[RMDB]
Chemical mapping of a 207-nucleotide RNA with DMS and 2A3. The reactions ran in a buffer of 150 mM KOAc, 10 mM MgCl2 and 150 mM bicine (pH 8.5), at 24 C.

RNA sequence: GGGAACGACUCGAGUAGAGUCGAAAAUAAUGUCGCGGCCAUGAUGGACGCAUAUGUCGCAUAUAAGGCCACUAAGGAGGCGUUCGAAUGACCAAUGAAGUAGACGAUUUCCUCAUACACUACGGUGUGAAGGGAAUGAAGUGGGGGCGUCGUAAAGAAGGCAAGAAUUAUUCGUAAUUCUUGCCUUAAAAGAAACAACAACAACAAC
Reactivity to DMS in 0.01 (KOAc 150mM, MgCl2 10mM, bicine 150mM(pH8.5), 24C), signal-to-noise 3, nucleotides 027 to 156: u010a050a050u010g010u000c090g030c020g020g000c000c030a100u000g020a210u030g070g010a030c030g050c070a070u000a050u000g000u000c040g050c090a120u000a090u010a060a160g040g000c030c020a110c040u020a000a100g010g010a090g010g000c020g020u010u000c020g000a120a120u000g000a070c030c010a070a090u010g010a100a110g040u000a100g010a050c070g010a090u000u000u000c000c010u000c030a070u010a060c010a060c080u000a070c120g060g020u010g040u000g000a110a040g020g000g000a000a050u000g020a070a090g000u000g000g020g020g090g000c040g010u000c060g020u020a030a060a110g010
Reactivity to 2A3 in 0.01 (KOAc 150mM, MgCl2 10mM, bicine 150mM(pH8.5), 24C), signal-to-noise 2, nucleotides 027 to 156: u180a000a060u100g010u070c090g010c010g070g000c000c030a070u160g030a140u160g180g000a010c010g000c040a020u080a160u100g020u000c020g000c180a010u120a000u020a190a050g060g000c030c020a020c070u010a000a090g030g040a030g010g040c020g020u010u060c060g050a090a090u030g010a080c010c010a010a110u110g070a050a060g000u120a030g040a010c030g020a000u030u050u000c000c000u010c020a010u090a010c010a010c050u150a080c140g090g000u000g000u020g040a150a050g000g000g040a020a010u070g060a150a030g020u100g020g010g000g000g000c030g010u020c010g000u030a010a000a060g180
Background: The DMS profile rests on 5,837 reads. The data come from the RNA Mapping Database (RMDB), library OK3TST. For 2A3 the reverse transcriptase was SuperScript II with manganese.